[RMDB]
RNA sequence: GGGAACGACUCGAGUAGAGUCGAAAAUGGCCGAUAUGGGCGUGCCGCUGAACACCAGCCCGCGGCUGCCAGAUAUCCCGGACUCGGUAGUGCCGCCGGUGGCGUCGUUGCUCUCCUGACGGGGCGCAUGUAGCAAGAUGUUCGCAUCUUGCUACAUAAAAGAAACAACAACAACAAC
Reactivity to DMS in 0.01 (KOAc 150mM, MgCl2 10mM, bicine 150mM(pH8.5), 24C), signal-to-noise 3, nucleotides 027 to 126: u010g010g000c020c030g000a080u000a080u010g010g010g010c010g010u010g010c030c030g020c040u010g000a100a100c090a080c100c090a120g000c030c050c130g000c040g010g020c010u000g010c030c010a050g000a110u000a080u000c010c030c000g000g030a120c090u000c050g010g000u000a090g000u000g010c040c030g010c030c040g000g010u000g010g020c020g000u000c080g010u000u000g010c040u000c040u000c030c020u010g010a150c100g000g010g010g030c080g010c110
Reactivity to 2A3 in 0.01 (KOAc 150mM, MgCl2 10mM, bicine 150mM(pH8.5), 24C), signal-to-noise 1, nucleotides 027 to 126: u050g010g000c000c040g020a040u060a060u240g030g020g020c050g030u040g030c010c010g000c090u070g030a100a010c050a090c090c030a010g030c010c000c010g000c030g000g020c010u020g000c010c000a040g070a120u130a070u090c010c000c000g000g010a050c040u050c020g010g030u030a040g080u100g120c060c050g020c020c020g080g010u020g020g000c030g010u010c010g000u030u050g000c000u000c000u000c020c020u000g040a040c030g000g040g050g000c020g020c010